[RMDB]
RNA sequence: GGGAACGACUCGAGUAGAGUCGAAAAAGCUGAACUUUGCCGACGAUGCCGCCGCUGAAGCCGCCCACCAGAAGAUCGAGGCAGGCACCAGCUUCCUCGAUAUCGGCAAGGAACAGGGCAAGACCGAUCCCCUCCUAUGAUUCGUCAUAGGAGGGGAAAAAGAAACAACAACAACAAC
Reactivity to DMS in 0.01 (KOAc 150mM, MgCl2 10mM, bicine 150mM(pH8.5), 24C), signal-to-noise 2, nucleotides 027 to 126: a160g010c020u000g010a080a280c070u010u000u000g000c020c020g000a040c180g020a120u000g010c040c060g000c050c050g030c030u010g000a070a080g000c020c110g010c000c030c050a120c090c100a110g010a100a080g020a020u000c030g000a030g020g000c150a020g020g020c010a150c140c190a060g030c060u000u010c000c000u000c010g010a080u020a100u000c030g010g000c030a010a040g010g010a030a150c070a030g000g030g030c120a070a080g000a130c010c030g000a160
Reactivity to 2A3 in 0.01 (KOAc 150mM, MgCl2 10mM, bicine 150mM(pH8.5), 24C), signal-to-noise 1, nucleotides 027 to 126: a000g050c020u030g000a020a000c000u050u020u030g010c000c000g020a050c000g050a020u060g030c060c040g030c010c010g000c080u070g020a060a030g010c050c010g030c000c000c010a080c020c000a050g100a230a020g000a110u060c010g000a060g010g070c090a060g050g000c030a060c070c020a010g000c000u020u030c010c000u020c010g000a000u030a060u110c000g000g010c000a000a000g010g010a030a020c040a050g110g050g000c050a030a020g060a020c100c000g000a070